[RMDB]
RNA sequence: GGGAACGACUCGAGUAGAGUCGAAAAUUACCGCGACACUGGUUUAUACCCAAGGUCACAGAGCUGCGGCUGAGUCAGAACAAACUGAAGAGUUUGGUUCCAGAAGGUGUUCUUUUUCGUUCUGUGACAACCGUGAACCUUUCGAGGUUCACGGUUGAAAAGAAACAACAACAACAAC
Reactivity to DMS in 0.01 (KOAc 150mM, MgCl2 10mM, bicine 150mM(pH8.5), 24C), signal-to-noise 2, nucleotides 027 to 126: u050u000a100c030c010g000c100g000a110c090a060c120u010g010g000u000u010u000a120u000a130c090c010c040a180a110g020g000u010c010a010c010a030g010a020g000c040u000g020c050g050g000c070u030g000a130g000u060c070a140g000a030a040c040a030a000a050c010u010g000a170a170g000a020g000u000u000u000g010g000u000u010c020c060a200g020a050a130g030g010u000g020u010u000c020u000u000u000u000u030c090g030u020u000c010u000g040u030g000a050
Reactivity to 2A3 in 0.01 (KOAc 150mM, MgCl2 10mM, bicine 150mM(pH8.5), 24C), signal-to-noise 4, nucleotides 027 to 126: u130u070a090c020c030g010c040g010a020c040a030c120u070g070g030u110u080u060a150u160a090c000c000c000a070a080g120g000u010c000a010c000a020g030a020g000c030u100g000c070g080g010c030u070g020a010g120u070c000a000g030a050a030c010a000a030a030c010u100g080a170a020g020a090g130u010u010u060g120g090u070u000c010c000a030g030a060a040g150g030u030g070u140u100c090u080u080u000u030u060c050g020u000u030c000u000g060u020g040a010

The data come from the RNA Mapping Database (RMDB), library OK1LIB. This 177-nucleotide RNA was probed chemically with DMS and 2A3. The 2A3 profile rests on 1,774 reads. DMS adducts were read by reverse transcription with MarathonRT. 2A3 adducts were read by reverse transcription with SuperScript II with manganese.